[RMDB]
RNA sequence: GGGAACGACUCGAGUAGAGUCGAAAAGAGCGUGUAGAAUAGGACUCGACGUACGAAACGCACCUUUGUACGACUCUUUUGAGUCGGUAGUUUUCUACCGUCGAGGUGCGUGAUAUACACGCGAAAAGGGUAGCUGAGUGUUCGCAUUCAGUUACCCAAAAGAAACAACAACAACAAC
Reactivity to DMS in 0.01 (KOAc 150mM, MgCl2 10mM, bicine 150mM(pH8.5), 24C), signal-to-noise 9, nucleotides 027 to 126: g010a230g010c010g020u000g010u000a010g000a140a130u030a110g000g010a110c030u000c010g010a030c020g010u000a020c040g000a020a030a070c050g000c060a030c060c030u000u010u010g000u000a030c020g000a020c010u000c000u010u020u030u040g010a010g000u000c000g000g000u000a000g000u020u030u020u030c010u000a010c020c000g000u000c020g000a010g000g020u010g010c020g010u010g000a040u020a120u000a010c010a000c010g000c000g010a040a070a110a120
Reactivity to 2A3 in 0.01 (KOAc 150mM, MgCl2 10mM, bicine 150mM(pH8.5), 24C), signal-to-noise 9, nucleotides 027 to 126: g090a010g000c010g000u010g010u010a020g040a180a070u060a060g030g060a030c010u010c030g020a010c020g010u030a010c030g020a020a040a010c060g020c050a060c010c030u030u050u130g030u030a020c020g010a010c010u010c020u060u210u150u300g000a000g000u000c000g000g000u000a010g000u010u090u150u100c010u000a010c000c010g010u010c010g000a000g000g010u010g020c010g010u000g000a000u010a000u000a020c000a000c000g000c000g020a030a030a010a010